[RMDB]
RNA sequence: GGGAACGACUCGAGUAGAGUCGAAAAAGUCACCCAUUACGAUAGGUGACAUUUGAACCAGCGAACAAUUCAGUUGCGAGAUUCGAGGUUUCAGUCUGAAUCAUAGUAGCCAUUACGAUGGCUACAACUCACUCCCGACUGUUCGCAGUCGGGAGAAGAUGUAGAAGAGGUUCGCCUCUUCUACAUCAAAAGAAACAACAACAACAAC
Reactivity to DMS in 0.01 (KOAc 150mM, MgCl2 10mM, bicine 150mM(pH8.5), 24C), signal-to-noise 3, nucleotides 027 to 156: a090g000u000c000a030c000c000c010a130u010u010a120c200g040a170u010a010g010g010u000g000a010c010a070u000u000u000g020a130a240c020c030a140g010c030g000a070a050c080a150a130u000u000c030a090g010u000u000g010c010g000a070g000a110u000u000c030g030a210g000g020u000u000u030c050a070g000u000c030u000g010a050a030u010c120a090u010a160g010u000a000g020c000c010a050u000u000a140c270g040a100u000g000g040c010u000a000c000a030a050c120u000c050a130c010u000c000c000c010g030a040c000u010g030u000u000c300g040c020a010g000u000c010g000g030g010a000g000a000a010
Reactivity to 2A3 in 0.01 (KOAc 150mM, MgCl2 10mM, bicine 150mM(pH8.5), 24C), signal-to-noise 5, nucleotides 027 to 156: a000g010u000c000a010c010c010c000a080u110u260a080c180g040a070u100a140g000g000u010g000a000c010a010u100u050u080g030a040a010c010c000a010g160c000g000a000a000c010a050a100u000u010c000a000g000u000u000g000c000g000a000g000a010u000u010c010g000a010g040g060u130u170u240c030a030g150u070c000u000g020a000a010u020c020a030u070a070g000u000a000g000c000c000a010u050u020a060c220g140a010u010g000g010c010u000a000c000a000a000c010u050c020a060c020u000c000c000c000g010a010c010u010g040u050u060c200g000c090a000g000u010c000g000g050g000a000g000a000a000
Source: RMDB library M2RFPK, as collected in RNAgym.
The record gives the reactivity of an RNA of 207 nucleotides to DMS and 2A3.
2A3 adducts were read by reverse transcription with SuperScript II with manganese.
The reactions ran in a buffer of 150 mM KOAc, 10 mM MgCl2 and 150 mM bicine (pH 8.5), at 24 C.
DMS adducts were read by reverse transcription with MarathonRT.
Reactivities are given for positions 27 through 156.